RNA sequence: GGGAACGACUCGAGUAGAGUCGAAAAGCGUUCAUUUCUUGACUGCAACUUUGGUCACCACGCUGUGGCGAUGGCCGAACGAUCACUCAUGUGUCGACGCUGAAACGACUUCCUCGGCCUGCUGAGCCCGAUAUACUCGUUUCGACGAGUAUAUCGGAAAAGAAACAACAACAACAAC
Reactivity to 2A3 in 0.01 (KOAc 150mM, MgCl2 10mM, bicine 150mM(pH8.5), 24C), signal-to-noise 9, nucleotides 027 to 126: g020c010g020u060u060c060a120u110u130u090c030u060u070g020a040c030u030g010c030a070a060c030u040u030u050g020g000u030c010a020c050c010a060c050g300c170u220g040u060g150g010c090g140a150u050g020g000c010c000g010a040a030c040g030a060u090c020a010c030u040c010a050u110g040u020g040u130c060g020a030c020g000c030u020g020a080a110a030c040g030a030c010u060u030c020c010u020c010g020g010c010c010u040g010c040u040g030a040g040c000
Reactivity to DMS in 0.01 (KOAc 150mM, MgCl2 10mM, bicine 150mM(pH8.5), 24C), signal-to-noise 5, nucleotides 027 to 126: g000c000g010u020u000c150a070u010u010u060c070u010u000g010a060c070u010g000c040a030a190c300u000u000u010g020g000u000c020a060c050c080a080c000g010c100u030g000u040g000g020c100g000a110u030g000g000c000c000g000a030a050c040g000a300u010c040a040c030u020c040a060u010g030u020g000u010c150g010a050c060g010c020u010g000a060a100a110c060g010a090c050u000u000c110c020u000c030g010g000c020c000u010g000c040u010g010a140g000c110
The record gives the reactivity of an RNA of 177 nucleotides to 2A3 and DMS.
Conditions: 150 mM KOAc, 10 mM MgCl2 and 150 mM bicine (pH 8.5), 24 C.
DMS adducts were read by reverse transcription with MarathonRT.
The 2A3 profile rests on 18,971 reads.
Reactivities are rounded to 0.1 and cut off at 0 and 3.